The record gives the reactivity of an RNA of 177 nucleotides to 2A3 and DMS. Source: RMDB library TTRDES, as collected in RNAgym. The DMS profile rests on 3,762 reads. For DMS the reverse transcriptase was MarathonRT. The RNA was probed in 150 mM KOAc, 10 mM MgCl2 and 150 mM bicine (pH 8.5) at 24 C.

[RMDB]
RNA sequence: GGGAACGACUCGAGUAGAGUCGAAAAGAUAUGGAACCCUACCUAGCAACAGCAUACGUUCGGAAACGAACGUUAUGACAUGCUAGAUGGGUUCCUAAGUCAAAACGGCGACGUUCGCGUCGCCGAAGCUUAAUAACCACUUCGGUGGUUAUUAAGCAAAAGAAACAACAACAACAAC
Reactivity to 2A3 in 0.01 (KOAc 150mM, MgCl2 10mM, bicine 150mM(pH8.5), 24C), signal-to-noise 3, nucleotides 027 to 126: g010a000u040a010u070g000g010a000a010c000c000c000u030a080c020c010u000a020g010c060a110a180c080a280g070c000a020u010a010c000g000u000u010c010g010g020a070a040a030c000g010a010a000c010g000u040u040a010u000g040a040c030a160u300g000c000u000a000g010a010u030g000g020g000u010u000c000c000u000a000a000g000u000c010a000a020a140a190c020g000g050c010g010a000c030g040u050u140c300g000c000g100u010c000g000c010c010g000a000a000
Reactivity to DMS in 0.01 (KOAc 150mM, MgCl2 10mM, bicine 150mM(pH8.5), 24C), signal-to-noise 3, nucleotides 027 to 126: g010a030u010a300u000g000g000a010a000c000c000c000u000a130c200c000u000a000g010c000a100a090c260a130g000c010a000u000a010c010g000u000u000c000g010g000a090a060a110c000g010a010a000c000g000u000u000a010u000g000a020c060a300u020g010c000u020a000g000a100u010g000g010g030u000u000c000c000u010a010a040g000u000c030a100a070a090a170c040g020g010c010g040a010c000g020u000u020c220g010c020g030u000c020g010c000c000g000a030a050